Conditions: 150 mM KOAc, 10 mM MgCl2 and 150 mM bicine (pH 8.5), 24 C. Chemical mapping of a 177-nucleotide RNA with DMS and 2A3.

[RMDB]
RNA sequence: GGGAACGACUCGAGUAGAGUCGAAAAAAGUAGGAAGGACACGGGUGAAGCGAUAGGGCUACACGCAAGUGACAUGGUGGUCAGGCUGCCGGAUAGCAGAUAGAGCGUGUGAUUCUUUGGAAACAGCUAACAGCAAGUGCUUCGGCACUUGCUGUUAAAAAGAAACAACAACAACAAC
Reactivity to DMS in 0.01 (KOAc 150mM, MgCl2 10mM, bicine 150mM(pH8.5), 24C), signal-to-noise 2, nucleotides 027 to 126: a060a030g050u010a120g000g000a150a050g000g000a080c070a090c070g000g020g040u010g020a180a030g040c080g020a100u000a040g020g000g010c060u010a090c040a070c000g000c170a080a060g000u000g000a130c100a050u020g000g000u000g000g040u000c030a090g000g020c090u000g030c030c040g000g000a140u010a050g020c030a010g000a010u000a070g020a110g020c040g020u020g010u030g000a150u000u000c040u030u020u000g020g000a100a020a100c080a050g000c120
Reactivity to 2A3 in 0.01 (KOAc 150mM, MgCl2 10mM, bicine 150mM(pH8.5), 24C), signal-to-noise 1, nucleotides 027 to 126: a020a080g280u120a050g000g070a190a000g120g000a010c000a000c000g070g000g000u060g040a110a000g000c020g000a000u150a030g040g010g000c000u070a050c070a000c050g000c060a060a070g020u000g000a020c000a000u080g000g010u120g030g170u010c020a020g150g000c040u040g000c010c010g010g070a080u160a080g020c000a090g020a000u140a060g030a000g010c020g000u000g000u000g000a010u000u070c000u010u100u010g060g030a050a000a010c000a000g000c040